[RMDB]
RNA sequence: GGGAACGACUCGAGUAGAGUCGAAAACGCGUUAAACGUGUAAAGGUCUUUGAAAUCCACGAUGAGGCUGUGCCGACCCAUCGAAAUCAUGCUCUUGACGCGCUCUCUGUACUUGUAGACGCCGGUGCACUCCAUGUAUGUUCGCAUACAUGGAGUGAAAAGAAACAACAACAACAAC
Reactivity to DMS in 0.01 (KOAc 150mM, MgCl2 10mM, bicine 150mM(pH8.5), 24C), signal-to-noise 7, nucleotides 027 to 126: c030g010c020g010u000u000a030a040a130c040g010u000g010u010a060a100a080g010g000u000c050u000u010u000g010a070a100a090u010c030c050a230c050g010a060u000g010a110g010g010c040u000g010u010g010c070c040g010a140c030c010c020a040u000c040g010a080a070a080u010c060a040u010g010c060u000c040u000u000g000a060c060g010c030g020c050u000c030u000c030u010g010u000a030c060u000u000g010u010a070g010a070c070g020c030c030g010g010u000g000
Reactivity to 2A3 in 0.01 (KOAc 150mM, MgCl2 10mM, bicine 150mM(pH8.5), 24C), signal-to-noise 7, nucleotides 027 to 126: c020g030c010g010u040u100a130a250a220c030g000u060g010u060a060a090a030g050g000u030c060u080u150u150g140a160a130a070u040c030c020a030c060g020a020u030g020a070g050g000c050u090g060u130g110c030c030g070a130c000c020c000a030u030c030g050a060a030a040u100c020a020u060g020c010u010c000u060u060g010a020c020g000c000g010c020u000c010u000c000u010g060u070a080c030u060u060g010u040a030g020a070c030g010c050c020g050g030u080g020